This 207-nucleotide RNA was probed chemically with 2A3. The data come from the RNA Mapping Database (RMDB), library M2RFPK. Values cover nucleotides 27 to 156. Conditions: 150 mM KOAc, 10 mM MgCl2 and 150 mM bicine (pH 8.5), 24 C.
RNA sequence: GGGAACGACUCGAGUAGAGUCGAAAAAGUCCUCCGACUGGUUACGACCAGGCGGAGGACAAGGAGGUCAGGGUCAGGAGCCCCCCCCUGAACCCAGGAUAACCCUCAAAGUCGGGGGGCAACCCAAAGGAGCGAUGAAGUUUCGACUUCAUCGCAAGAUAAAUCUGUAGUUCGCUACAGAUUUAUCAAAAGAAACAACAACAACAAC
Reactivity to 2A3 in 0.01 (KOAc 150mM, MgCl2 10mM, bicine 150mM(pH8.5), 24C), signal-to-noise 1, nucleotides 027 to 156: a000g000u000c010c000u020c010c000g010a000c000u000g040g030u080u070a090c290g040a020c060c000a000g000g000c000g000g000a010g000g010a000c000a010a000g040g020a050g020g050u140c130a050g000g000g000u000c000a010g000g000a020g010c000c000c000c000c010c000c000c000u020g000a090a050c010c050c000a010g010g050a090u040a120a020c010c020c000u030c060a060a070a010g100u160c020g000g000g000g030g010g000c010a020a040c040c040c020a000a070a060g240g020a150g020c000g010a020u000g010a000a000g000u010u110u300c260g070a060c000u000u000c010a000u060c000g000c000a000a000